This 177-nucleotide RNA was probed chemically with DMS and 2A3. Reactivities are rounded to 0.1 and cut off at 0 and 3. Values cover nucleotides 27 to 126. For DMS the reverse transcriptase was MarathonRT. The RNA was probed in 150 mM KOAc, 10 mM MgCl2 and 150 mM bicine (pH 8.5) at 24 C. 2A3 adducts were read by reverse transcription with SuperScript II with manganese.

[RMDB]
RNA sequence: GGGAACGACUCGAGUAGAGUCGAAAACUUUAAUUUUCGGAUAAUCCCAUUCUCAGGAAUACGCUUCCUAUAUUUUGGAAUUUGCUAAAUUUCAGGCGGACUAUCAAUCAUUUAGAUUGCCUCCGAAGUUACGAAUCGAUUUCGAUCGAUUCGUAACAAAAGAAACAACAACAACAAC
Reactivity to DMS in 0.01 (KOAc 150mM, MgCl2 10mM, bicine 150mM(pH8.5), 24C), signal-to-noise 2, nucleotides 027 to 126: c120u010u010u000a060a020u010u000u020u010c020g000g000a120u030a090a060u010c020c030c020a180u030u000c050u000c140a060g010g000a030a040u000a110c240g000c060u000u030c010c010u000a060u060a060u000u000u040u000g060g000a090a000u020u000u010g000c110u060a030a030a040u000u000u030c020a020g000g000c120g040g000a020c130u020a050u030c000a010a000u000c010a160u040u010u010a050g000a030u000u000g000c300c120u000c010c020g010a020a080
Reactivity to 2A3 in 0.01 (KOAc 150mM, MgCl2 10mM, bicine 150mM(pH8.5), 24C), signal-to-noise 5, nucleotides 027 to 126: c020u100u080u190a160a150u110u120u070u100c040g040g010a040u080a100a090u100c010c000c040a040u130u080c060u020c050a030g020g050a040a030u090a090c150g040c110u020u030c000c000u040a080u020a070u220u120u050u060g050g020a040a000u080u060u140g070c100u150a070a120a190u030u030u040c030a030g010g050c020g070g000a080c010u080a050u130c010a020a020u000c000a010u100u100u100a050g000a030u000u040g010c000c000u000c020c010g020a050a000